[RMDB]
RNA sequence: GGGAACGACUCGAGUAGAGUCGAAAAAUUGAGCGGCAGCUUCGACAUUGAUCAGACCUUUUCCAUAGUAGAAGGAGCUUCCCAAAUAAGUCGCCGUACUGGAGAGACGGUUGCGGACUUGUGAAGCAUGGCUAUGACUUUUCGAAGUCAUAGCCAUAAAAGAAACAACAACAACAAC
Reactivity to 2A3 in 0.01 (KOAc 150mM, MgCl2 10mM, bicine 150mM(pH8.5), 24C), signal-to-noise 5, nucleotides 027 to 126: a010u110u130g030a020g030c010g040g010c040a020g000c030u060u040c040g040a040c030a090u050u140g030a020u100c020a010g090a140c010c000u040u020u040u020c030c050a090u090a070g140u080a010g080a120a040g050g010a020g010c000u010u030c020c030c010a000a070a020u140a010a000g020u020c030g000c010c000g020u040a110c030u070g110g050a100g010a030g000a080c010g010g030u010u090g040c070g000g030a020c040u020u040g010u030g060a000a000g020c030
Reactivity to DMS in 0.01 (KOAc 150mM, MgCl2 10mM, bicine 150mM(pH8.5), 24C), signal-to-noise 3, nucleotides 027 to 126: a070u020u010g000a050g000c060g000g010c070a120g000c030u010u000c060g000a070c100a070u010u010g000a050u000c060a060g010a130c020c010u010u000u010u000c000c070a170u040a160g010u000a040g010a030a080g010g000a160g020c070u000u010c000c000c010a020a080a100u000a040a110g000u020c020g000c030c000g000u010a060c040u050g020g010a140g000a140g010a040c020g000g000u000u010g050c110g000g000a150c220u020u000g010u010g020a060a040g000c030
Chemical mapping of a 177-nucleotide RNA with 2A3 and DMS. Source: RMDB libraries RFM100 and RFMREP, as collected in RNAgym. The RNA was probed in 150 mM KOAc, 10 mM MgCl2 and 150 mM bicine (pH 8.5) at 24 C. Values cover nucleotides 27 to 126. For DMS the reverse transcriptase was MarathonRT.